[RMDB]
RNA sequence: GGGAACGACUCGAGUAGAGUCGAAAAUUCGGAAGGAAUUCUCCCAAGAAGGUCCAAGAGAACUUUCAAGAAGGAGGAUUUUUCCCCAAGACGCUGGUGGACUCUUGGAAUGGGAAAGAGGAGGGCGCUACUAAGAGGACUUCGGUCCUCUUAGUAGAAAAGAAACAACAACAACAAC
Reactivity to DMS in 0.01 (KOAc 150mM, MgCl2 10mM, bicine 150mM(pH8.5), 24C), signal-to-noise 1, nucleotides 027 to 126: u010u010c080g030g000a070a100g010g040a010a010u000u000c070u000c010c000c010a120a160g000a040a010g000g010u000c010c010a100a160g000a100g000a040a050c000u020u000u010c010a060a110g020a150a190g010g010a040g000g000a060u000u010u000u000u000c000c000c000c040a050a090g000a110c230g000c000u000g020g010u000g010g030a150c070u010c010u000u010g000g000a030a070u000g000g000g000a040a030a020g010a090g000g000a080g000g010g010c100g010
Chemical mapping of a 177-nucleotide RNA with DMS. It was measured as part of the RMDB library 15KREP.